[RMDB]
RNA sequence: GGGAACGACUCGAGUAGAGUCGAAAAUACGUACCGUUCGCGGUACGUAACUUACCGAGAACCUUGCUCGGUAUAACAAGGAAACCCUUGGAAACAAGGCAACAAGAUUACCCUUCGGGGUAAUCAAUUACUAUGCGCUAUUCGUAGCGCAUAGUAAAAAAGAAACAACAACAACAAC
Reactivity to DMS in 0.01 (KOAc 150mM, MgCl2 10mM, bicine 150mM(pH8.5), 24C), signal-to-noise 3, nucleotides 027 to 126: u000a000c000g010u000a000c000c000g020u010u030c250g020c000g000g010u000a000c000g010u000a000a080c100u000u010a100c020c000g000a010g000a090a170c030c020u000u010g000c000u000c000g000g020u000a020u000a060a070c090a040a020g000g020a110a120a180c260c000c000u000u000g010g010a080a230a180c010a010a010g000g000c100a060a110c200a140a130g010a020u000u000a010c000c000c000u010u010c200g010g020g000g000u000a000a000u000c000a050a080
Reactivity to 2A3 in 0.01 (KOAc 150mM, MgCl2 10mM, bicine 150mM(pH8.5), 24C), signal-to-noise 1, nucleotides 027 to 126: u050a000c000g000u010a010c000c010g020u040u080c200g030c020g110g000u000a000c000g020u000a000a020c000u020u030a020c000c010g010a020g000a020a050c030c000u030u030g010c000u000c000g010g010u030a000u030a020a010c020a030a000g050g050a100a170a110c040c000c000u030u040g060g050a020a060a010c010a000a000g030g000c050a050a000c030a040a110g000a000u010u010a000c020c020c000u000u080c260g040g010g010g000u000a000a000u000c000a000a000
Structure probing data (DMS and 2A3) for a 177-nucleotide construct. Source: RMDB library M2PK50, as collected in RNAgym. For DMS, 2,090 sequencing reads were counted. The RNA was probed in 150 mM KOAc, 10 mM MgCl2 and 150 mM bicine (pH 8.5) at 24 C. The 2A3 profile rests on 2,542 reads.